[RMDB]
RNA sequence: GGGAACGACUCGAGUAGAGUCGAAAAUCCCAAAGCGGAUUUAGCUCGGUUGGGAGAGCUCCAGACCGAAGAUCUGGUGGUCCUGUGUUCGAUCCACAGAAUUCGCACCAUAAACAACGGGAGAUUCACGUGAUCAUUAUUUCGAUAAUGAUCACGUAAAAGAAACAACAACAACAAC
Reactivity to DMS in 0.01 (KOAc 150mM, MgCl2 10mM, bicine 150mM(pH8.5), 24C), signal-to-noise 6, nucleotides 027 to 126: u000c000c000c000a070a070a120g030c030g000g000a030u000u020u010a060g010c020u000c040g000g010u020u020g010g010g010a170g000a080g010c040u020c020c030a070g010a080c020c050g020a140a110g000a250u020c030u000g000g000u020g000g020u010c050c010u000g000u000g000u010u010c110g000a300u000c130c030a020c050a020g010a030a030u010u020c050g010c020a150c080c060a070u040a070a100a080c140a050a120c120g010g010g010a100g010a090u020u020c080
Reactivity to 2A3 in 0.01 (KOAc 150mM, MgCl2 10mM, bicine 150mM(pH8.5), 24C), signal-to-noise 9, nucleotides 027 to 126: u010c010c000c000a030a030a000g010c020g010g010a020u020u040u080a030g010c010u000c020g070g070u140u160g110g100g020a070g010a020g030c000u000c000c000a010g020a010c010c110g190a110a040g040a170u010c000u010g020g000u020g010g010u070c000c010u010g000u000g010u020u050c020g010a020u000c020c010a000c000a010g020a010a020u030u020c010g000c030a050c020c000a050u220a150a170a030c090a080a030c080g060g050g010a090g020a060u110u100c080